Structure probing data (DMS) for a 177-nucleotide construct.

[RMDB]
RNA sequence: GGGAACGACUCGAGUAGAGUCGAAAAGUUGAUCUUGGAUGCGGACGGGGAGGAUGGAGCCAGCAUUUGGCGAUGGAUCGUCGGGUCACGGAGAUCAAAGGUUACACCCUUGGCGGCAGCAAUCGGGCUGAUCAAACGACUUCGGUCGUUUGAUCAGAAAAGAAACAACAACAACAAC
Reactivity to DMS in 0.01 (KOAc 150mM, MgCl2 10mM, bicine 150mM(pH8.5), 24C), signal-to-noise 1, nucleotides 027 to 126: g020u000u020g020a070u000c030u000u000g050g000a120u000g000c070g000g020a030c100g010g000g040g000a030g020g020a070u000g000g010a240g010c050c010a060g030c210a150u000u020u000g030g030c050g010a210u020g000g030a050u010c020g000u000c030g040g010g010u000c090a060c060g040g000a070g000a110u020c030a050a080a120g010g010u000u010a120c170a080c090c010c010u010u010g000g010c030g020g000c050a050g000c080a020a050u010c110g000g000g000
It was measured as part of the RMDB library OK2TRN. The reactions ran in a buffer of 150 mM KOAc, 10 mM MgCl2 and 150 mM bicine (pH 8.5), at 24 C. DMS adducts were read by reverse transcription with MarathonRT.